[RMDB]
RNA sequence: GGGAACGACUCGAGUAGAGUCGAAAAUAUUAGAAUGAAGGGUUACUUCUUUGUUAUUCAAACACACACCCACACACAUCCUCUGUAGUCUCCCUAAUGAAAAACCUCAACAGAUGGAGAGCCUGAGCUCCCAAGUCCGCAGGCUGAGAAGAUGCAAGAUGCAUCAUUUAUUCGUAAAUGAUGCAUCAAAAGAAACAACAACAACAAC
Reactivity to DMS in 0.01 (KOAc 150mM, MgCl2 10mM, bicine 150mM(pH8.5), 24C), signal-to-noise 2, nucleotides 027 to 156: u000a130u010u010a120g010a070a090u000g010a120a080g040g020g000u000u000a060c070u010u000c050u000u010u020g010u000u000a140u000u010c030a040a080a060c070a070c050a080c050a090c010c000c020a050c030a100c060a090c070a100u000c000c000u000c030u010g030u000a120g020u000c060u010c020c010c000u000a100a090u020g010a070a060a050a050a040c000c000u000c020a180a140c090a040g020a090u000g030g000a060g000a070g030c020c030u000g010a080g030c010u000c020c000c060a070a160g000u010c070c030g000c050a080g070g000c030u000g010a130g030a080a050g030a130u010g000c050a080a200
Reactivity to 2A3 in 0.01 (KOAc 150mM, MgCl2 10mM, bicine 150mM(pH8.5), 24C), signal-to-noise 2, nucleotides 027 to 156: u090a050u050u220a030g030a040a090u080g020a100a070g040g050g010u060u110a050c050u050u070c000u050u030u080g060u070u090a180u150u200c030a090a160a000c030a000c020a010c010a020c090c020c000a010c000a000c000a000c000a070u000c020c030u000c020u080g020u130a090g050u060c020u040c020c030c010u060a060a080u030g050a030a070a050a000a000c000c000u070c010a060a070c000a060g030a080u120g030g010a040g010a010g050c000c070u030g030a030g010c000u050c050c040c000a040a020g030u010c040c050g000c080a020g000g000c000u000g010a000g020a040a020g020a030u100g000c030a060a030
This 207-nucleotide RNA was probed chemically with DMS and 2A3.
The reactions ran in a buffer of 150 mM KOAc, 10 mM MgCl2 and 150 mM bicine (pH 8.5), at 24 C.
For 2A3, 1,335 sequencing reads were counted.
High 2A3 reactivity points to a flexible backbone, as in loops and unpaired stretches.
Source: RMDB library OK3TST, as collected in RNAgym.
For DMS the reverse transcriptase was MarathonRT.